[RMDB]
RNA sequence: GGGAACGACUCGAGUAGAGUCGAAAACCUGUAACGUUCGCGUUACAGGAAAAUAAAAAUCUCCAGCCUGGAGAAGGCGAAAAAUUGAUCGAAAACGAUCAAAAAGUCUACAGUUCGCUGUAGACAAUCCUAAUCAUUACUUCGGUAAUGAUUAGGAAAAAGAAACAACAACAACAAC
Reactivity to 2A3 in 0.01 (KOAc 150mM, MgCl2 10mM, bicine 150mM(pH8.5), 24C), signal-to-noise 2, nucleotides 027 to 126: c000c000u000g010u010a000a000c000g000u020u070c280g010c000g090u000u010a000c010a000g010g020a060a150a000a020u100a000a090a020a000a030u020c030u020c000c000a040g040c000c000u030g020g010a150g030a100a010g020g010c000g030a000a030a000a020a080u030u020g000a000u020c000g070a020a200a070a300c060g010a000u020c030a030a050a010a000a000g010u010c010u000a000c000a000g010u010u040c110g120c120u000g000u010a000g000a000c000a000a030
Reactivity to DMS in 0.01 (KOAc 150mM, MgCl2 10mM, bicine 150mM(pH8.5), 24C), signal-to-noise 3, nucleotides 027 to 126: c000c000u000g000u000a000a010c000g030u000u010c220g000c000g020u000u000a010c000a000g000g000a010a020a020a080u020a030a060a080a140a080u000c030u000c010c070a170g010c010c010u010g000g040a140g030a110a010g000g010c000g000a030a070a060a070a090u000u000g000a020u000c010g000a080a060a110a190c020g000a010u000c010a050a020a100a130a160g000u000c000u000a010c000a000g010u000u010c180g000c010u000g000u010a000g000a010c010a030a060

Chemical mapping of a 177-nucleotide RNA with 2A3 and DMS. The RNA was probed in 150 mM KOAc, 10 mM MgCl2 and 150 mM bicine (pH 8.5) at 24 C. For DMS the reverse transcriptase was MarathonRT. Values cover nucleotides 27 to 126. The 2A3 profile rests on 2,614 reads.